[RMDB]
RNA sequence: GGGAACGACUCGAGUAGAGUCGAAAAUUGUUAUGUCAGAUAUGGGGUCAUUUGUGAAUGCUAUUACUUCCAUAGAGACGCAGAUAUGGAUUUUGAUCGCAAAGGCUGUAACUGCCCCAGAUACAGCGAAGCGGCUUGGAUUCGUCCAAGCCGCUUCAAAAGAAACAACAACAACAAC
Reactivity to DMS in 0.01 (KOAc 150mM, MgCl2 10mM, bicine 150mM(pH8.5), 24C), signal-to-noise 1, nucleotides 027 to 126: u000u010g010u010u010a060u010g010u010c030a090g000a170u000a060u000g000g030g030g010u010c110a100u010u010u000g000u010g020a050a090u010g020c100u010a030u000u010a070c060u000u000c010c010a000u000a000g030a280g000a120c160g040c130a030g000a150u010a030u000g030g000a040u000u000u000u000g000a080u000c140g010c090a030a030a080g020g020c010u000g000u000a050a100c050u000g030c020c030c020c080a010g000a160u000a000c040a030g020c050
The data come from the RNA Mapping Database (RMDB), library OK2TST.
The record gives the reactivity of an RNA of 177 nucleotides to DMS.
For DMS the reverse transcriptase was MarathonRT.
The RNA was probed in 150 mM KOAc, 10 mM MgCl2 and 150 mM bicine (pH 8.5) at 24 C.
Values cover nucleotides 27 to 126.
The DMS profile rests on 827 reads.
High DMS reactivity at an A or C suggests that its Watson-Crick edge is free.